[RMDB]
RNA sequence: GGGAACGACUCGAGUAGAGUCGAAAAGAAACAGGCGAGAAUCUUUACCUGCUUGGUGUAUUCAAUGGUGAGGCGGCCACAUUGGUUCAUGAAUGCGCUCACGUUGCAUUUUAUGUCUGCCGAGAUGCCUUACGGUCCCAUUCGUGGGACCGUAAGGAAAAGAAACAACAACAACAAC
Reactivity to DMS in 0.01 (KOAc 150mM, MgCl2 10mM, bicine 150mM(pH8.5), 24C), signal-to-noise 1, nucleotides 027 to 126: g030a090a070a150c050a030g000g010c040g010a020g040a100a060u000c050u000u010u030a160c080c020u010g000c060u010u000g040g040u010g010u000a050u000u000c070a030a080u010g000g000u000g040a070g030g010c030g000g000c020c030a050c110a100u000u000g000g000u000u010c060a010u000g000a030a030u000g000c020g000c010u000c150a050c300g030u030u000g010c050a050u010u000u010u000a030u000g000u010c110u030g000c010c030g010a110g050a170u000g020
Reactivity to 2A3 in 0.01 (KOAc 150mM, MgCl2 10mM, bicine 150mM(pH8.5), 24C), signal-to-noise 1, nucleotides 027 to 126: g070a010a100a010c020a000g030g000c080g070a050g090a110a090u000c030u040u090u120a040c050c020u090g070c090u030u030g020g000u170g040u070a130u060u100c110a080a090u090g000g120u090g040a110g020g030c080g010g050c060c020a040c000a120u030u150g040g000u150u060c040a050u120g050a050a000u030g030c140g000c040u050c030a080c110g040u080u140g000c000a020u050u000u050u200a080u100g060u000c020u040g030c020c000g000a020g000a010u120g090